[RMDB]
RNA sequence: GGGAACGACUCGAGUAGAGUCGAAAAUCUCGAGUUCACACGUACUCGUACUCGUGAGAGAACGAGUACGAGUGAUCGUACGUACUCGUGUGAGUACACGUUCGAACUCACUCUCGAGAACGAGUUCGUUCUCUCGUGAACUCGAUCACGUGAGAACCUCGUCAACAUCCUUCGGGAUGUUGACGAGAAAAGAAACAACAACAACAAC
Reactivity to 2A3 in 0.01 (KOAc 150mM, MgCl2 10mM, bicine 150mM(pH8.5), 24C), signal-to-noise 2, nucleotides 027 to 156: u040c040u010c000g010a000g060u110u060c000a010c000a020c100g000u000a000c010u000c010g010u030a030c000u000c020g050u110g080a170g010a000g010a090a010c000g000a000g000u000a000c000g010a000g000u000g020a010u070c030g050u050a070c040g000u000a000c010u010c030g150u150g000u290g150a020g000u010a000c040a010c100g040u060u080c090g010a100a070c030u030c050a050c010u010c000u010c020g000a060g020a160a090c040g010a060g090u010u130c040g000u030u000c000u000c020u010c020g000u000g040a090a040c030u030c210g060a140u040c070a000c010g000u070g000a030g000a020a030c010

Structure probing data (2A3) for a 207-nucleotide construct. 2A3 adducts were read by reverse transcription with SuperScript II with manganese. The RNA was probed in 150 mM KOAc, 10 mM MgCl2 and 150 mM bicine (pH 8.5) at 24 C.